[RMDB]
RNA sequence: GGGAACGACUCGAGUAGAGUCGAAAAAAGCAUUACGUGAAGAAUGUAAGAACGAGGUUUUAAAAGCUUUUACUGAAGCAAAAUCAGAUCCAGAACCCACGAUUGCCACAUUAGAAGAGGGUGUGUAACGGUUCAUUAGUUUCGACUAAUGAACCGUAAAAGAAACAACAACAACAAC
Reactivity to DMS in 0.01 (KOAc 150mM, MgCl2 10mM, bicine 150mM(pH8.5), 24C), signal-to-noise 2, nucleotides 027 to 126: a040a090g020c040a090u010u000a060c090g010u000g000a080a180g020a160a020u010g010u000a070a090g030a070a100c100g020a120g000g030u000u000u000u010a030a120a110a120g010c030u010u000u000u010a190c110u000g000a020a080g030c120a050a020a060a050u010c060a020g000a080u000c040c010a050g010a020a090c050c010c030a110c160g010a110u010u010g040c060c030a060c040a070u000u000a110g010a030a040g010a110g010g000g030u000g000u000g020u010a100
Reactivity to 2A3 in 0.01 (KOAc 150mM, MgCl2 10mM, bicine 150mM(pH8.5), 24C), signal-to-noise 1, nucleotides 027 to 126: a000a000g020c060a020u060u080a070c010g040u070g080a050a040g060a130a080u100g010u060a060a070g010a120a040c070g040a120g060g070u000u010u140u190a110a270a000a030g000c010u000u060u010u140a130c120u180g050a010a010g050c020a150a030a000a110u030c000a000g000a040u000c030c010a020g020a080a010c010c000c000a020c000g040a060u000u110g000c030c000a030c010a060u070u110a040g010a160a030g040a060g050g060g020u050g040u050g010u040a090